[RMDB]
RNA sequence: GGGAACGACUCGAGUAGAGUCGAAAAAGGGGCUGUGCUGGGACCCUGAUUCCAAAUUCUACAGAUACCAUGAGGCCUGAGCUGACCUCAGUCAGAUCCUUCCUCAAACCCAUCAGUUCUCACUGGAGUACAAACCGAUAUUCGUAUCGGUUUGUACAAAAGAAACAACAACAACAAC
Reactivity to DMS in 0.01 (KOAc 150mM, MgCl2 10mM, bicine 150mM(pH8.5), 24C), signal-to-noise 4, nucleotides 027 to 126: a110g020g000g000g010c090u000g000u000g030c070u000g010g010g010a110c020c000c010u000g000a150u000u000c000c030a070a110a070u010u000c070u010a090c050a060g010a090u010a060c150c110a090u000g010a050g010g000c120c130u000g000a060g040c070u000g000a050c030c120u000c130a090g030u010c080a050g000a050u010c020c060u000u000c020c030u010c050a080a110a150c030c010c040a060u000c080a070g000u000u010c020u010c060a180c140u000g000g010a300
Reactivity to 2A3 in 0.01 (KOAc 150mM, MgCl2 10mM, bicine 150mM(pH8.5), 24C), signal-to-noise 2, nucleotides 027 to 126: a000g020g020g010g000c060u070g020u120g100c040u040g060g070g050a060c030c000c050u010g040a100u050u050c000c000a030a080a080u150u080c020u090a160c030a060g050a090u130a110c000c060a100u080g010a010g020g020c000c010u000g020a020g040c000u010g050a050c000c030u090c050a030g020u030c000a010g020a090u060c000c020u030u040c000c000u090c070a050a070a110c030c010c010a040u040c020a030g030u090u010c030u000c020a080c050u000g040g000a050